[RMDB]
RNA sequence: GGGAACGACUCGAGUAGAGUCGAAAAAUACAUACUGACACCGGUUGCUCAACAGGCUGUGUGGGACAAUAGAAUGACAAGGCUGUCAAUUUGAGCUUGACGGCUGCAAACCGAAUGGAGUGAAAUCGUAACCGGACUCACUUCGGUGAGUCCGGAACUUCUAGCUUUAGUUCGCUAAAGCUAGAAGAAAAGAAACAACAACAACAAC
Reactivity to DMS in 0.01 (KOAc 150mM, MgCl2 10mM, bicine 150mM(pH8.5), 24C), signal-to-noise 2, nucleotides 027 to 156: a080u000a090c060a120u000a170c060u000g000a090c070a100c050c040g000g010u010u000g060c060u010c050a050a110c100a090g040g020c040u000g000u020g030u010g020g030g010a100c020a050a130u010a090g000a070a130u000g010a100c050a070a160g030g000c010u010g030u000c020a020a100u010u010u010g010a150g030c290u010u000g020a010c020g010g040c020u000g000c050a040a110a070c030c000g000a070a150u000g010g000a080g030u000g010a100a110a130u010c060g010u010a100a120c000c030g010g010a030c000u000c000a030c050u000u000c270g030g080u010g010a010g000u000c020c000g000g000a000a000
Reactivity to 2A3 in 0.01 (KOAc 150mM, MgCl2 10mM, bicine 150mM(pH8.5), 24C), signal-to-noise 2, nucleotides 027 to 156: a000u120a020c030a010u110a050c040u080g050a010c040a040c080c030g110g000u030u050g020c040u090c060a040a060c030a110g110g000c030u020g020u040g010u050g070g030g040a010c010a010a060u090a120g110a090a110u080g010a040c010a080a060g040g000c030u020g000u020c010a010a000u130u060u200g030a010g060c010u000u010g010a000c000g020g000c010u030g010c010a070a070a010c030c030g080a030a080u160g050g020a010g040u080g040a080a040a080u180c090g040u040a040a080c000c000g010g000a000c000u000c000a000c000u040u020c180g030g000u000g000a000g000u010c000c000g010g000a000a000